[RMDB]
RNA sequence: GGGAACGACUCGAGUAGAGUCGAAAAGAUUGACAAAAUGAAAGGAGUUUUGUCCAAGCUCGAGGCCUUUGCUGAAACAGCCACCCCGUCCCUUGACAUAGGUGACGUGAUUGUUCUGCUUGGGCAAGAAAUGGACCGGAUUCGUCCGGUCCAUUUCAAAAGAAACAACAACAACAAC
Reactivity to 2A3 in 0.01 (KOAc 150mM, MgCl2 10mM, bicine 150mM(pH8.5), 24C), signal-to-noise 2, nucleotides 027 to 126: g080a060u130u180g010a010c010a010a010a040a020u060g140a140a120a180g170g070a210g060u030u030u020u000g020u000c030c040a160a110g030c010u030c040g040a050g110g030c000c010u060u050u020g000c060u000g020a050a080a000c000a000g000c020c010a030c000c000c000c000g000u000c030c010c000u080u170g130a160c060a120u290a020g000g100u170g120a010c000g000u000g020a030u050u040g030u000u000c040u000g010c000u000u010g020g000g000c000a040a060
Reactivity to DMS in 0.01 (KOAc 150mM, MgCl2 10mM, bicine 150mM(pH8.5), 24C), signal-to-noise 1, nucleotides 027 to 126: g030a110u040u000g010a020c060a070a020a040a030u000g030a140a190a060g000g000a160g090u000u000u000u000g030u000c040c130a000a060g020c030u030c050g010a160g020g000c000c030u000u000u000g000c000u000g040a090a010a030c000a020g030c150c120a090c040c020c040c010g000u000c000c000c000u000u060g000a140c180a010u010a020g030g010u060g040a040c040g010u000g000a050u060u000g000u000u000c000u000g040c010u000u020g010g000g000c000a050a060